[RMDB]
RNA sequence: GGGAACGACUCGAGUAGAGUCGAAAACCUGAUCCGGCAGCAAUCUCGCACUUGCACAAAUCCAUAUUGCACUGCAAUAUGGACUGGGCGGGAAUGCGAGCUGGGUUCGAAAUGUACCGUCGUACCCCUGUAGUGCAGCAUUCGUGCUGCACUACAGAAAAGAAACAACAACAACAAC
Reactivity to DMS in 0.01 (KOAc 150mM, MgCl2 10mM, bicine 150mM(pH8.5), 24C), signal-to-noise 2, nucleotides 027 to 126: c020c000u000g000a000u000c000c000g000g020c000a300g000c020a010a040u020c010u000c000g000c000a050c040u010u040g050c280a100c210a040a140a210u000c000c000a010u000a000u000u000g020c020a250c160u070g000c000a000a010u010a000u000g010g000a010c090u020g000g000g020c000g000g010g000a010a030u000g010c000g000a100g030c000u000g000g010g010u000u070c060g000a030a110a040u030g000u000a140c090c120g000u010c010g010u000a070c000c000c020
Reactivity to 2A3 in 0.01 (KOAc 150mM, MgCl2 10mM, bicine 150mM(pH8.5), 24C), signal-to-noise 6, nucleotides 027 to 126: c000c010u010g020a010u000c000c000g000g000c000a010g000c000a010a050u010c000u010c020g020c010a250c110u030u150g030c130a050c060a140a150a020u000c000c000a000u000a020u020u000g010c130a140c300u240g000c010a000a000u000a000u000g000g010a000c000u010g000g010g000c000g010g010g000a030a010u020g000c000g030a030g000c000u020g000g000g010u010u050c030g050a040a070a040u230g040u110a090c040c050g020u010c010g010u020a050c000c000c000